The record gives the reactivity of an RNA of 177 nucleotides to 2A3 and DMS. The 2A3 profile rests on 1,296 reads. For 2A3 the reverse transcriptase was SuperScript II with manganese. It was measured as part of the RMDB library OK2TRN. The reactions ran in a buffer of 150 mM KOAc, 10 mM MgCl2 and 150 mM bicine (pH 8.5), at 24 C.
RNA sequence: GGGAACGACUCGAGUAGAGUCGAAAAUCUGCGUACCCGGGUUGGUAAGGGGUCCUCCCGCGAACUGCGUCGCAACGGCCAGAUUCCUGCAGUCAUCUAUGGCGACAAGCAGGAGCCCCUCGCAAUAACUAAUAAAUCCGUUCGCGGAUUUAUUAGUAAAAGAAACAACAACAACAAC
Reactivity to 2A3 in 0.01 (KOAc 150mM, MgCl2 10mM, bicine 150mM(pH8.5), 24C), signal-to-noise 1, nucleotides 027 to 126: u020c000u020g010c020g050u130a160c000c000c010g060g000g070u120u120g000g030u080a040a040g010g000g000g010u080c010c000u030c000c000c010g000c030g010a070a030c050u100g010c030g030u030c030g000c080a110a070c050g000g040c000c000a020g010a100u060u080c020c000u010g010c010a030g010u010c020a070u010c070u200a180u230g080g030c020g020a060c030a060a060g020c020a010g000g000a000g000c000c000c010c000u000c020g050c000a060a170u070a150
Reactivity to DMS in 0.01 (KOAc 150mM, MgCl2 10mM, bicine 150mM(pH8.5), 24C), signal-to-noise 3, nucleotides 027 to 126: u010c050u010g010c050g020u010a100c030c030c040g030g010g010u010u010g010g020u010a070a060g000g010g000g010u010c130c040u000c040c020c030g000c090g000a080a120c070u010g010c110g030u000c030g000c110a100a090c120g000g000c040c040a070g000a140u000u000c020c020u020g040c030a180g010u000c030a080u010c090u000a080u010g010g000c060g000a030c040a050a120g020c010a040g000g000a050g010c020c000c010c050u000c040g010c120a070a050u000a090